[RMDB]
An RNA of 207 nucleotides, treated with 2A3 and DMS and read out base by base. DMS adducts were read by reverse transcription with MarathonRT. The 2A3 profile rests on 1,409 reads. 2A3 adducts were read by reverse transcription with SuperScript II with manganese. Conditions: 150 mM KOAc, 10 mM MgCl2 and 150 mM bicine (pH 8.5), 24 C.

RNA sequence: GGGAACGACUCGAGUAGAGUCGAAAACGCACUCGCAGCUUAAUAACCUGCGCUGAGCCCUUCUCCCCCAGCUUGCCUGUGUCCUAGGGAAUCGGAAGGUCAUCCUUCACAGGAUCGUGUGGAAGUCAUUACUCGUGAGUGUUCGCACUCACGAGAAGGUGUGUAUUGAGUUCGCUCAAUACACACCAAAAGAAACAACAACAACAAC
Reactivity to 2A3 in 0.01 (KOAc 150mM, MgCl2 10mM, bicine 150mM(pH8.5), 24C), signal-to-noise 2, nucleotides 027 to 156: c060g000c000a040c010u030c000g000c000a000g000c010u030u040a040a010u060a050a050c010c000u000g000c000g040c140u090g010a050g000c000c020c000u150u050c080u040c040c000c000c000c000a010g020c040u040u090g040c020c000u040g020u020g000u070c020c040u040a060g000g000g060a040a070u110c070g050g110a070a040g060g000u030c060a080u130c030c000u080u080c010a050c000a000g020g010a030u090c080g010u050g010u040g140g040a070a050g060u100c020a090u040u100a060c000u000c000g000u000g010a000g010u020g030u050u080c120g040c020a000c000u000c000a000c000g000a000g010a000a010
Reactivity to DMS in 0.01 (KOAc 150mM, MgCl2 10mM, bicine 150mM(pH8.5), 24C), signal-to-noise 2, nucleotides 027 to 156: c100g030c020a130c030u010c040g010c050a060g100c050u010u030a160a150u020a140a120c230c010u030g020c000g010c140u000g020a110g000c040c020c050u000u000c030u000c020c020c040c020c030a100g020c060u000u000g020c020c030u000g000u010g000u010c080c040u020a090g030g020g030a090a040u000c050g020g020a110a180g020g010u020c050a200u010c000c000u000u030c100a130c050a030g020g000a080u000c060g030u000g000u000g010g000a110a130g000u000c050a050u000u000a240c000u000c000g050u000g000a040g050u020g020u000u020c300g020c020a020c000u000c000a010c000g000a000g010a020a050